RNA sequence: GGGAACGACUCGAGUAGAGUCGAAAAACAUAGGCCAUGCUUACGAGCAUGGCCUAUGACGAAUCUCAAGCAAUCAAGCAUUCUACUUCUAUUGCAACACUGAGGGGCUUACGAGCUCCUCAGUGAAAAAAGAGAGUAAUGUUCGCAUUACUCUCAACUGAGAGAAAAUCUUCGGAUUUUCUCUCAGAAAAGAAACAACAACAACAAC
Reactivity to 2A3 in 0.01 (KOAc 150mM, MgCl2 10mM, bicine 150mM(pH8.5), 24C), signal-to-noise 1, nucleotides 027 to 156: a000c010a020u010a000g000g000c040c010a000u040g000c030u130u070a040c280g060a050g020c060a000u000g000g000c000c000u000a000u000g000a000c010g060a010a060u000c010u000c030a010a050g000c000a030a030u110c050a080a000g000c020a110u100u070c030u180a160c080u040u120c030u160a040u010u020g000c040a140a090c020a040c010u000g010a000g020g000g010g010c000u040u070a020c230g030a030g000c000u000c000c000u000c000a000g000u000g000a000a000a000a000a000a000g000a000g000a000g000u010a000a000u010g010u000u040c190g000c050a000u000u000a000c000u000c000u000c000a000a010
This 207-nucleotide RNA was probed chemically with 2A3. For 2A3 the reverse transcriptase was SuperScript II with manganese. It was measured as part of the RMDB library M2RFPK.